Chemical mapping of a 207-nucleotide RNA with DMS and 2A3. It was measured as part of the RMDB library M2RFPK. The reactions ran in a buffer of 150 mM KOAc, 10 mM MgCl2 and 150 mM bicine (pH 8.5), at 24 C. The 2A3 profile rests on 838 reads. Values cover nucleotides 27 to 156.

[RMDB]
RNA sequence: GGGAACGACUCGAGUAGAGUCGAAAAGGGUGAGACCUAGGAACCGUAGGGGUAUUCUCAAAGGAAGCUUUUGCAGUGACGCCCAUGUAAGUGGGAUAUAACAACAGCACUCGUAUGAGUAGCCUAAUAAAUCGGACCUUCUUCGGAAGGUCCGAAAUCCUUAUAUUUGCUUCGGCAAAUAUAAGGAAAAAGAAACAACAACAACAAC
Reactivity to DMS in 0.01 (KOAc 150mM, MgCl2 10mM, bicine 150mM(pH8.5), 24C), signal-to-noise 1, nucleotides 027 to 156: g030g010g040u000g000a080g010a090c030c000u000a070g010g010a070a080c040c050g060u000a040g010g000g010g010u000a070u010u000c030u000c020a080a120a130g030g010a170a090g010c060u000u000u000u000g020c060a080g030u000g010a230c080g020c040c030c000a010u010g000u000a030a160g000u000g010g000g000a140u000a070u000a120a110c050a030a100c110a090g030c030a080c010u000c000g030u000a100u010g000a020g000u000a070g010c000c000u000a050a100u000a070a050a120u010c000g030g010a010c000c010u000u000c000u000u010c290g030g010a010a000g000g010u000c000c000g000a000a010a020
Reactivity to 2A3 in 0.01 (KOAc 150mM, MgCl2 10mM, bicine 150mM(pH8.5), 24C), signal-to-noise 2, nucleotides 027 to 156: g070g000g010u020g010a090g040a010c030c040u090a020g060g080a100a040c100c050g040u080a040g000g020g020g010u060a100u150u070c010u010c020a070a050a040g120g010a040a100g010c020u040u080u080u070g040c080a030g010u000g040a030c120g010c000c010c020a040u080g070u170a170a060g030u010g010g000g000a010u030a010u060a060a070c050a000a040c010a020g010c010a010c030u070c050g060u160a030u230g010a010g030u040a080g000c010c000u060a110a100u050a100a180a040u030c020g000g030a000c000c010u000u000c000u000u000c010g070g000a000a000g000g000u030c000c000g000a000a000a000